Structure probing data (2A3 and DMS) for a 177-nucleotide construct. 2A3 adducts were read by reverse transcription with SuperScript II with manganese. DMS adducts were read by reverse transcription with MarathonRT. The reactions ran in a buffer of 150 mM KOAc, 10 mM MgCl2 and 150 mM bicine (pH 8.5), at 24 C.
RNA sequence: GGGAACGACUCGAGUAGAGUCGAAAAGACGGGUCAGUAACAGGAUCGAACGUACCCCGAGGUGGGGGAUAGCGGUGGGAAACUGCCGGUAAUACCUCAUGAUCUCUCCGGAGCAAAGCCUCGGCGCACCAUCCACAAGUUUCGACUUGUGGAUGGUAAAAGAAACAACAACAACAAC
Reactivity to 2A3 in 0.01 (KOAc 150mM, MgCl2 10mM, bicine 150mM(pH8.5), 24C), signal-to-noise 7, nucleotides 027 to 126: g060a030c030g010g010g010u030c020a050g070u120a180a030c040a090g100g040a020u040c020g040a050a030c020g020u100a050c010c010c010c010g010a010g010g010u070g010g020g000g000g000a010u020a000g110c000g010g020u010g000g010g000a030a060a030c000u020g000c000c000g020g010u050a070a020u160a230c000c000u010c030a040u110g170a220u030c040u000c000u000c030c160g060g010a010g000c040a070a040a030g010c000c000u000c000g010g000c040g010c020
Reactivity to DMS in 0.01 (KOAc 150mM, MgCl2 10mM, bicine 150mM(pH8.5), 24C), signal-to-noise 5, nucleotides 027 to 126: g020a070c090g010g020g000u010c040a060g000u000a170a150c180a220g010g020a030u010c020g030a100a150c050g010u000a100c040c050c010c030g000a040g010g000u000g000g020g000g010g000a100u000a040g000c010g000g010u000g000g000g000a110a070a110c000u010g000c000c000g000g010u000a050a090u030a190c000c000u000c000a130u030g010a090u030c020u000c010u020c160c170g000g000a040g000c110a080a120a110g000c020c010u000c020g020g000c170g010c210